[RMDB]
RNA sequence: GGGAACGACUCGAGUAGAGUCGAAAAGAGACAAUUCUGAGGCCAAGGGAAACGAAGGACUUGGCGCUUGUGGCAAUGGCUUCGAAUUCCCCUUUGAUUUGCGCAGCAAAGUUCUCCGCAGCGGCAAGAUCGAGUACCAGUUCGCUGGUACUCGAUCAAAAGAAACAACAACAACAAC
Reactivity to 2A3 in 0.01 (KOAc 150mM, MgCl2 10mM, bicine 150mM(pH8.5), 24C), signal-to-noise 4, nucleotides 027 to 126: g120a010g020a010c080a010a150u090u040c030u130g040a030g070g000c020c010a040a030g120g000g030a080a180a030c070g060a110a030g050g060a070c010u040u030g020g030c010g060c050u130u130g060u080g130g000c050a090a160u110g010g000c000u020u000c020g030a110a100u020u040c000c000c000c000u010u120u180g130a180u040u070u100g000c110g000c030a060g000c020a080a030a090g040u090u030c010u000c030c020g020c020a010g020c020g020g010c030a060a050
Reactivity to DMS in 0.01 (KOAc 150mM, MgCl2 10mM, bicine 150mM(pH8.5), 24C), signal-to-noise 2, nucleotides 027 to 126: g040a020g040a140c150a110a070u000u020c040u010g020a120g000g000c130c040a160a100g010g000g010a030a080a110c170g000a030a090g020g010a090c040u000u000g000g020c000g040c080u030u000g010u010g020g010c080a070a100u030g000g020c030u040u000c020g010a100a110u000u010c070c000c000c110u020u010u000g030a120u000u010u020g000c020g000c040a150g030c020a000a060a130g010u000u000c020u010c000c010g020c030a070g000c030g010g000c140a100a090